[RMDB]
RNA sequence: GGGAACGACUCGAGUAGAGUCGAAAACGGUAUUGGUCAAGGCUAUACCGACAGCGCACCUUCAAAAGGGCGCUUAAUCCCCGGCCAAGCGCCGAGAUAUGAAUAGACACCGCUGGGCUGGUAGGGCAAAACAUGGCGAUCUUCGGAUCGCCAUGAAGUAAUUGACAUUGUUCGCAAUGUCAAUUACAAAAGAAACAACAACAACAAC
Reactivity to DMS in 0.01 (KOAc 150mM, MgCl2 10mM, bicine 150mM(pH8.5), 24C), signal-to-noise 2, nucleotides 027 to 156: c020g070g070u000a040u000u040g010g030u010c020a090a140g050g040c010u010a050u000a050c050c040g040a180c120a040g060c000g000c000a010c010c010u000u000c130a100a120a200a170g060g000g010c040g020c030u010u000a020a070u010c030c020c000c040g060g020c000c020a120a070g010c050g000c000c020g000a110g010a110u000a100u000g020a160a110u000a160g000a140c030a110c050c020g010c020u000g000g030g030c020u000g010g050u000a070g030g010g000c110a040a080a100a170c010a010u000g010g010c000g000a010u000c000u000u010c260g070g010a020u010c020g030c000c010a010u000g000a000a040
Reactivity to 2A3 in 0.01 (KOAc 150mM, MgCl2 10mM, bicine 150mM(pH8.5), 24C), signal-to-noise 3, nucleotides 027 to 156: c020g010g010u000a020u050u200g040g020u100c080a110a130g110g040c010u010a000u000a010c000c030g010a030c060a020g000c000g010c080a300c110c000u050u100c060a050a050a080a040g010g010g000c000g000c000u000u010a020a020u000c000c000c000c000g020g000c010c010a060a030g010c020g020c040c040g100a050g020a050u220a040u180g100a070a070u080a080g040a020c050a000c030c020g000c020u020g040g030g020c000u000g030g030u090a050g050g020g010c050a020a020a050a060c010a030u000g000g000c000g000a000u000c000u050u050c130g060g000a000u020c000g000c000c000a000u000g010a000a000
Source information: Chemical mapping of a 207-nucleotide RNA with DMS and 2A3. Values are in units of 0.01, from 0 to 300, in steps of 10. For DMS the reverse transcriptase was MarathonRT.